[RMDB]
RNA sequence: GGGAACGACUCGAGUAGAGUCGAAAACAACCGUCUUUCCCCCGUCGUUGGUUUGUCCUGGGCAGAGCUGUCUGCCCGGAGGCGGGGGAGUCCUAUCUAAAGUGUCCCGGCUUAAAUAAAUCGAUCUUUGCGGGCAGCCCAUUGGCAGGAGGCGUGACCAAAGAUCAAUGUUCGCAUUGAUCUUUGGAAAAGAAACAACAACAACAAC
Reactivity to 2A3 in 0.01 (KOAc 150mM, MgCl2 10mM, bicine 150mM(pH8.5), 24C), signal-to-noise 2, nucleotides 027 to 156: c020a020a040c040c010g070u030c070u010u090u040c000c000c000c000c000g010u040c000g010u060u110g150g000u100u100u170g080u130c030c080u070g010g040g010c030a010g000a030g040c190u170g160u200c010u000g050c000c000c000g000g000a000g000g020c010g000g000g000g000g000a000g000u000c000c020u090a110u140c060u100a130a120a040g040u020g050u080c000c000c020g110g010c110u110u110a050a090a080u150a080a180a070u160c040g070a000u050c060u070u050u160g050c050g000g000g000c000a000g000c000c010c010a060u010u150g030g000c040a030g010g050a010g010g000c050g060u020g030a050
Reactivity to DMS in 0.01 (KOAc 150mM, MgCl2 10mM, bicine 150mM(pH8.5), 24C), signal-to-noise 1, nucleotides 027 to 156: c080a050a260c050c020g000u010c060u000u010u000c000c010c000c020c030g010u000c020g020u010u020g010g030u000u000u020g000u000c000c000u000g060g000g000c000a030g000a060g050c090u000g030u010c000u000g010c000c000c000g000g010a130g030g020c000g050g000g030g070g010a000g020u000c010c040u000a080u030c080u010a080a020a090g010u000g000u010c010c030c000g010g040c060u000u010a050a090a110u000a060a100a140u000c010g000a090u010c080u000u010u000g020c070g050g020g060c030a130g020c030c010c000a250u000u000g010g000c090a080g020g020a090g010g010c030g020u010g010a200
Structure probing data (2A3 and DMS) for a 207-nucleotide construct.
The DMS profile rests on 3,008 reads.
Source: RMDB library ARCHII, as collected in RNAgym.
2A3 is a SHAPE reagent: it acylates the 2'-hydroxyl of flexible nucleotides of all four kinds.
Conditions: 150 mM KOAc, 10 mM MgCl2 and 150 mM bicine (pH 8.5), 24 C.